[RMDB]
Structure probing data (2A3 and DMS) for a 177-nucleotide construct.
The data come from the RNA Mapping Database (RMDB), library OK1LIB.
DMS (dimethyl sulfate) methylates the pairing face of unpaired adenines and cytosines.
For DMS the reverse transcriptase was MarathonRT.
RNA sequence: GGGAACGACUCGAGUAGAGUCGAAAACACCCUGAGUGACAUGAUUCACCUUUUGGUUUUGAUGCCUAGCGUUAGUGCGCUCGGACGUGGCUGGCCGCUUGUUGGCAUCGUUCGAUUCUUGAGCGGGUCAUCCGUAUAUCUUCGGAUAUACGGAUGAAAAAGAAACAACAACAACAAC
Reactivity to 2A3 in 0.01 (KOAc 150mM, MgCl2 10mM, bicine 150mM(pH8.5), 24C), signal-to-noise 9, nucleotides 027 to 126: c100a070c010c010c030u040g090a090g060u030g030a010c060a180u180g050a250u150u050c020a060c020c000u040u110u100u170g110g010u050u090u100u190g060a040u100g010c010c010u020a020g010c010g040u030u070a080g020u090g120c020g000c030u060c100g130g030a140c020g030u030g110g000c030u020g020g030c030c040g020c070u070u120g070u060u080g060g000c000a030u020c010g000u010u010c020g030a070u030u050c020u100u140g040a040g020c020g030g010g010
Reactivity to DMS in 0.01 (KOAc 150mM, MgCl2 10mM, bicine 150mM(pH8.5), 24C), signal-to-noise 6, nucleotides 027 to 126: c180a110c030c020c050u020g000a070g020u000g000a080c120a110u030g010a150u030u010c040a040c030c050u000u010u020u020g000g010u000u010u020u010g020a080u020g010c010c010u000a060g000c040g010u020u020a050g020u020g000c020g000c020u010c080g010g010a090c050g010u010g010g010c040u000g000g010c050c070g020c050u000u000g010u020u020g000g010c030a040u000c040g010u010u010c040g000a070u000u010c070u010u010g010a070g000c020g010g000g000